RNA sequence: GGGAACGACUCGAGUAGAGUCGAAAAAAUUUGAGCGUCGCACACACACAGACUAAGUCUGCUGCUGACAGAGCCUAAACCGCUCUGUCAGUGUGCGAGAUAUCGUUCUUAAUGUGAGCAGAAGAAACAAUUACAGAAAGUUCGCUUUCUGUAAUUGAAAAGAAACAACAACAACAAC
Reactivity to 2A3 in 0.01 (KOAc 150mM, MgCl2 10mM, bicine 150mM(pH8.5), 24C), signal-to-noise 7, nucleotides 027 to 126: a000a010u110u070u060g020a020g020c040g050u030c020g010c010a010c000a000c000a000c000a000c000a020g020a020c050u190a280a040g030u000c010u010g050c020u030g020c020u010g010a000c000a000g000a000g010c000c000u040a060a040a040c010c000g000c000u000c000u000g000u000c000a000g000u000g000u010g000c010g000a000g010a000u110a030u080c030g030u080u020c000u050u100a160a120u150g050u060g100a040g010c070a040g040a150a000g030a010a090a010
Reactivity to DMS in 0.01 (KOAc 150mM, MgCl2 10mM, bicine 150mM(pH8.5), 24C), signal-to-noise 9, nucleotides 027 to 126: a060a080u000u000u010g000a040g020c040g020u000c020g010c010a030c010a070c130a230c140a090c080a030g000a020c020u000a120a150g010u000c000u000g000c080u000g010c150u000g000a010c010a000g010a000g010c000c010u000a070a060a130c300c300g000c000u000c000u000g000u000c000a010g010u000g010u000g000c000g000a030g000a080u010a100u010c050g010u010u000c010u000u000a060a090u000g010u000g000a080g010c050a090g010a060a060g000a080a070a110